[RMDB]
RNA sequence: GGGAACGACUCGAGUAGAGUCGAAAAGGGUUUGGAUUACAUCAAUAGUAACAUGAGCAGAAGUAAACAGAACAAGAAGUACUGCGGUUAUUCAAGUUCAAAGUUCACACUAUCGCAAUUAAGGGAAGUUGCGGAAUGUAUUCGUACAUUCCGCAACAAAAGAAACAACAACAACAAC
Reactivity to DMS in 0.01 (KOAc 150mM, MgCl2 10mM, bicine 150mM(pH8.5), 24C), signal-to-noise 1, nucleotides 027 to 126: g000g000g030u000u010u030g010g010a110u000u000a110c070a130u030c090a040a050u010a020g030u000a060a070c090a090u010g000a090g030c030a060g000a030a070g050u000a040a080a020c060a120g020a040a020c110a040a300g000a040a000g000u000a030c030u000g010c080g000g000u010u000a120u020u010c070a030a180g000u000u000c020a050a060a140g000u000u000c050a090c050a090c020u000a070u000c030g010c020a010a050u010u000a040a040g020g000g010a050a010
Reactivity to 2A3 in 0.01 (KOAc 150mM, MgCl2 10mM, bicine 150mM(pH8.5), 24C), signal-to-noise 1, nucleotides 027 to 126: g090g000g000u060u070u000g100g030a110u110u130a050c030a050u120c050a040a150u140a170g090u030a000a070c010a070u070g030a010g000c080a010g010a160a000g050u110a010a070a000c010a030g030a000a020c000a030a030g050a080a010g030u010a020c010u000g070c050g030g050u000u000a000u110u000c030a010a040g010u030u000c000a140a000a150g000u080u090c050a050c000a010c050u070a090u160c030g000c080a050a160u140u040a060a030g030g000g050a040a040